[RMDB]
RNA sequence: GGGAACGACUCGAGUAGAGUCGAAAAACGACUGGCUACGGCCAGCCGAAUCGGGCCAAAGGCAGUCGCCCGACGACACAGGCGAUCGUUCGCCCAAGCGCUGCACACGACUAUACGUAGUCGUGAAUUGAUCACGCAACCUUCGGGUUGCGUGAAAUCUAAACGGAAAGUUCGCUUUCCGUUUAGAAAAAGAAACAACAACAACAAC
Reactivity to 2A3 in 0.01 (KOAc 150mM, MgCl2 10mM, bicine 150mM(pH8.5), 24C), signal-to-noise 2, nucleotides 027 to 156: a010c010g030a000c000u000g000g060c020u020a060c170g110g000c000c010a000g030c010c020g070a050a070u070c040g000g000g020c040c050a120a110a140g170g000c040a010g020u060c000g000c000c010c010g020a020c030g000a000c010a010c030a140g180g040c040g010a030u050c050g140u060u030c030g200c030c010c000a060a050g000c040g040c130u100g000c010a010c000a000c030g010a010c010u000a010u040a080c240g170u030a000g010u000c000g000u000g000a000a010u050u070g040a020u040c000a000c030g000c000a000a000c000c000u010u090c160g080g000g000u010u000g000c000g000u000g000a000a000a000
Reactivity to DMS in 0.01 (KOAc 150mM, MgCl2 10mM, bicine 150mM(pH8.5), 24C), signal-to-noise 1, nucleotides 027 to 156: a100c040g030a000c010u000g010g020c050u000a180c300g120g010c000c010a020g050c000c040g030a060a030u000c010g030g030g010c010c000a140a280a150g010g080c060a050g000u000c040g040c020c000c010g010a100c000g010a190c060a130c110a090g000g030c000g000a040u000c070g040u000u010c010g000c020c000c030a050a160g000c070g010c020u000g040c010a300c030a040c000g010a000c000u020a140u010a110c190g060u010a030g000u010c000g010u000g000a020a050u000u010g000a170u010c000a010c000g010c010a040a020c000c020u000u000c240g040g060g010u000u000g000c010g000u010g010a000a020a060
Structure probing data (2A3 and DMS) for a 207-nucleotide construct. Values cover nucleotides 27 to 156. Conditions: 150 mM KOAc, 10 mM MgCl2 and 150 mM bicine (pH 8.5), 24 C.